[RMDB]
RNA sequence: GGGAACGACUCGAGUAGAGUCGAAAACGAACCUCGCGUGUCUCGUCGCGCAACUUCGGGACCGCUGGGUAGACGGCGAUCUCCGAGUGGCGAGUAACAUCCGAACGCUGGACCGAAACGACGACUGAAACGAUGCACCAUUCGUGGUGCAUCGUUUAAAAGAAACAACAACAACAAC
Reactivity to DMS in 0.01 (KOAc 150mM, MgCl2 10mM, bicine 150mM(pH8.5), 24C), signal-to-noise 3, nucleotides 027 to 126: c190g010a100a100c030c040u000c210g000c180g020u010g020u000c020u000c000g030u000c040g000c030g040c120a140a060c110u010u000c170g010g000g020a030c000c000g010c000u010g000g000g030u030a100g010a150c020g010g010c010g010a050u000c010u010c010c020g010a020g020u000g000g000c030g020a070g010u010a070a070c080a070u000c120c040g000a050a080c150g010c020u000g000g010a090c120c030g000a060a080a040c060g000a050c090g000a060c170u010g000
Conditions: 150 mM KOAc, 10 mM MgCl2 and 150 mM bicine (pH 8.5), 24 C. This 177-nucleotide RNA was probed chemically with DMS. The DMS profile rests on 1,682 reads. For DMS the reverse transcriptase was MarathonRT.